[RMDB]
RNA sequence: GGGAACGACUCGAGUAGAGUCGAAAAGAUAUGGAUCACCUGUAUAGCUGAUACCAGGUGGGAGAAACUCUCGGAAACGAGAGAAUUUCGACGAUCACCGUAUCAGCUAUACAGGUGAUCCUAAGUCCGAAGUAUACAGGUUCGCCUGUAUACUUCGAAAAGAAACAACAACAACAAC
Reactivity to DMS in 0.01 (KOAc 150mM, MgCl2 10mM, bicine 150mM(pH8.5), 24C), signal-to-noise 3, nucleotides 027 to 126: g010a130u010a300u000g000g010a000u000c000a000c000c000u000g010u000a010u000a000g010c000u000g010a040u000a000c050c190a160g060g000u000g010g000g010a090g010a020a030a100c000u020c000u000c000g000g000a120a120a240c020g000a010g010a020g010a050a120u000u000u000c000g010a130c300g020a070u010c000a030c020c010g010u000a010u000c010a000g020c020u000a000u010a010c010a010g010g000u000g000a000u000c000c000u000a020a080g000u000c070